[RMDB]
RNA sequence: GGGAACGACUCGAGUAGAGUCGAAAAGAAAACACAACCUUCAGCAAGUGUUUCUUAACUGACAAGAAGAACAGAGUCGUGGAACCCAGGCUCAGUAACAACGAAUGUUCGUGCACAUUUCGUGAAAUUUGUCUGCAUGAAGGAGUCACAUUUGAGACUCGGUACUAGGAUUCGUCCUAGUACCGAGAAAAGAAACAACAACAACAAC
Reactivity to DMS in 0.01 (KOAc 150mM, MgCl2 10mM, bicine 150mM(pH8.5), 24C), signal-to-noise 1, nucleotides 027 to 156: g010a120a070a180a020c020a070c030a230a210c020c050u000u020c150a110g000c030a050a210g090u000g010u000u000u000c020u000u000a080a220c060u000g020a050c040a040a080g010a080a140g000a130a110c040a100g010a030g050u000c040g000u000g000g020a020a110c020c010c040a070g010g000c000u000c010a090g020u000a040a090c030a090a090c010g000a050a070u010g030u000u000c040g060u010g030c190a140c000a070u000u020u000c030g000u000g010a100a050a090u010u000u020g040u000c030u000g000c010a070u000g000a070a020g010g000a150g000u000c020a040c090a110u000u020u010g040a120g000a170
Reactivity to 2A3 in 0.01 (KOAc 150mM, MgCl2 10mM, bicine 150mM(pH8.5), 24C), signal-to-noise 2, nucleotides 027 to 156: g030a000a020a000a000c050a010c010a070a220c000c070u070u070c020a020g020c050a110a220g000u010g040u010u030u010c040u020u050a090a050c020u120g030a000c020a060a030g110a050a050g020a080a020c060a050g010a000g000u000c020g040u050g000g070a090a070c000c000c010a000g010g000c000u000c030a080g040u110a040a040c120a000a040c020g050a100a140u150g040u070u050c080g070u050g000c090a000c020a060u020u080u140c050g020u060g090a010a040a100u060u040u060g030u000c020u070g020c030a070u030g070a040a030g100g000a010g020u030c030a020c030a130u060u080u170g090a090g000a000
An RNA of 207 nucleotides, treated with DMS and 2A3 and read out base by base. For 2A3, 832 sequencing reads were counted. For 2A3 the reverse transcriptase was SuperScript II with manganese. DMS adducts were read by reverse transcription with MarathonRT. Source: RMDB library OK3TST, as collected in RNAgym.